[RMDB]
Description: Chemical mapping of a 177-nucleotide RNA with 2A3 and DMS. For 2A3, 1,527 sequencing reads were counted. The DMS profile rests on 2,922 reads. Source: RMDB library RFM100, as collected in RNAgym.
RNA sequence: GGGAACGACUCGAGUAGAGUCGAAAAGCCGCCGUCGCGGGCAGUGUCUAGCCAGGCCUUGACAAGCUAGCCGGAGGAGCGCCUAGGAACCCGAGCCGGAGCUCAGCGAGCGCAGCCUGCAGCUCCCCCAAAGGGCUUACUUCGGUAAGCCCUUUGGAAAAGAAACAACAACAACAAC
Reactivity to 2A3 in 0.01 (KOAc 150mM, MgCl2 10mM, bicine 150mM(pH8.5), 24C), signal-to-noise 2, nucleotides 027 to 126: g020c000c030g020c050c030g070u060c030g020c010g020g050g000c030a050g060u020g010u070c020u040a010g010c010c020a080g010g010c000c000u040u070g030a060c040a020a040g010c010u060a010g020c030c000g000g000a030g030g020a090g030c030g050c010c020u040a070g040g050a170a120c000c000c020g000a030g000c000c050g040g010a000g020c010u000c010a010g010c020g090a040g020c070g000c060a030g000c000c010u020g000c000a000g020c010u000c000c000c000
Reactivity to DMS in 0.01 (KOAc 150mM, MgCl2 10mM, bicine 150mM(pH8.5), 24C), signal-to-noise 2, nucleotides 027 to 126: g000c070c020g000c050c070g000u020c080g000c080g000g000g010c060a080g000u050g000u010c030u020a060g010c040c070a130g000g010c000c010u000u010g000a050c160a150a160g000c050u000a090g000c000c040g020g000a130g010g000a070g010c100g000c000c000u010a070g000g010a080a140c050c040c060g010a090g010c040c040g000g010a060g000c050u000c060a080g020c080g000a110g000c020g000c090a080g020c090c020u000g010c090a120g000c040u000c000c000c080